An RNA of 207 nucleotides, treated with DMS and 2A3 and read out base by base. Values cover nucleotides 27 to 156.
[RMDB]
RNA sequence: GGGAACGACUCGAGUAGAGUCGAAAAGGGUUUUGCGCUCUUUAAGCAGAUGGCAGGUUCACCCCGUACGGUGCGGAAGUUCGCGCUUCCGUGAAACGCGAAAAUCGGACGGUGGCUGCAAGUCGCAUUGAAGGGAUCGCCUUCGGGCGAUCCCUAAAGACAAUAGUGAAUUCGUUCACUAUUGUCUAAAAGAAACAACAACAACAAC
Reactivity to DMS in 0.01 (KOAc 150mM, MgCl2 10mM, bicine 150mM(pH8.5), 24C), signal-to-noise 1, nucleotides 027 to 156: g010g030g000u010u020u000u010g010c130g020c030u000c030u000u000u000a080a210g010c050a110g010a060u000g020g000c020a070g030g020u000u020c080a060c010c010c010c000g000u000a040c040g000g030u000g000c030g000g000a060a010g000u000u010c270g060c300g050c020u000u010c010c080g020u000g000a040a110a030c060g010c020g030a060a050a090a080u000c090g000g000a050c040g020g020u000g020g000c050u010g000c030a050a150g050u010c010g060c040a160u000u010g000a200a060g020g020g040a060u000c000g000c030c000u000u000c220g040g060g060c000g040a000u000c000c010c010u000a000a040
Reactivity to 2A3 in 0.01 (KOAc 150mM, MgCl2 10mM, bicine 150mM(pH8.5), 24C), signal-to-noise 2, nucleotides 027 to 156: g050g020g000u020u060u130u260g060c060g000c000u060c070u060u110u090a140a080g010c050a020g020a080u090g080g020c010a000g020g020u090u120c040a040c020c010c000c000g020u060a050c010g000g030u030g020c000g000g020a000a000g000u080u260c060g030c030g000c070u000u040c000c020g000u000g060a100a090a020c160g020c010g100a050a000a000a110u040c000g010g030a000c040g030g040u050g020g000c010u040g000c000a040a070g070u060c030g010c040a010u010u180g020a060a020g040g010g000a000u060c090g100c030c060u080u090c210g050g020g000c000g000a000u000c010c000c000u000a000a000